[RMDB]
RNA sequence: GGGAACGACUCGAGUAGAGUCGAAAAUCGCUGAUGACGAGUGUUACAUUUACAACAUGGACUAUGAAAAAGUGCUGUCCACUGAAAUGUACUUUUCACUAGAGGAUGUCACACCUGUUGAGGAUGAAGACGAGUGUGCUAGUGAGGUACAGUCCUCGAUGCAUGUCCGCUUCGGCGGACAUGCAUCAAAAGAAACAACAACAACAAC
Reactivity to 2A3 in 0.01 (KOAc 150mM, MgCl2 10mM, bicine 150mM(pH8.5), 24C), signal-to-noise 1, nucleotides 027 to 156: u010c010g000c000u090g030a070u060g000a090c040g000a060g040u040g020u050u220a070c090a130u110u010u110a170c100a070a030c030a050u030g000g070a060c060u120a130u300g110a060a000a000a000a000g070u090g090c040u030g010u050c000c040a000c110u070g070a110a060a060u110g000u040a000c000u100u140u170u020c000a020c040u000a010g000a020g220g060a160u130g060u020c000a000c010a020c000c020u040g050u060u050g060a110g300g000a190u150g080a030a070g000a000c000g000a080g110u000g000u000g010c000u000a000g000u000g030a050g020g000u000a020c020a000g000u040c000c110u000c080
Chemical mapping of a 207-nucleotide RNA with 2A3. For 2A3 the reverse transcriptase was SuperScript II with manganese. The 2A3 profile rests on 361 reads.